RNA sequence: GGGAACGACUCGAGUAGAGUCGAAAAGCUAGUCGGAGACGACUAGCAACGAUCAGUUCGCUGAUCGGAACGUGCAUUCGAAUACGCUAGAAGCACGAAUAGGCGACGCAUAGCGUAGAACAGAGGAAGCUCAUGACAUGAAUAACAAGGCGUCGCGAUCCACGGUCAUAUUCGUAUGACCGUGGAUAAAAGAAACAACAACAACAAC
Reactivity to DMS in 0.01 (KOAc 150mM, MgCl2 10mM, bicine 150mM(pH8.5), 24C), signal-to-noise 1, nucleotides 027 to 156: g000c000u010a000g010u020c000g020g010a290g020a300c000g000a000c010u000a000g040c000a030a010c060g000a010u000c010a010g000u020u000c300g090c010u000g000a000u000c000g010g010a000a060c020g020u000g000c000a190u000u010c080g000a130a110u000a000c010g000c000u000a080g040a100a060g000c050a010c010g010a170a090u010a120g010g030c010g000a030c000g040c000a100u050a060g000c010g030u000a060g020a060a170c110a180g000a070g000g010a140a030g000c040u000c030a070u000g010a230c110a130u000g010a170a110u010a050a050c070a050a030g200g000c000g030u060c000g000c000g010
Reactivity to 2A3 in 0.01 (KOAc 150mM, MgCl2 10mM, bicine 150mM(pH8.5), 24C), signal-to-noise 3, nucleotides 027 to 156: g000c000u000a000g000u000c010g020g010a050g000a120c000g010a000c010u000a010g000c000a000a010c010g000a000u000c000a010g030u090u110c150g000c140u000g000a000u000c000g000g050a010a010c000g000u010g030c040a300u000u020c000g000a040a020u000a020c000g000c020u000a000g000a010a000g000c010a000c030g000a030a050u240a060g050g000c000g000a000c000g000c020a040u100a040g000c000g000u010a010g050a120a010c100a070g000a040g070g090a070a060g100c030u070c070a070u090g040a100c050a140u220g060a150a040u170a190a000c110a070a100g100g000c000g000u000c010g000c010g000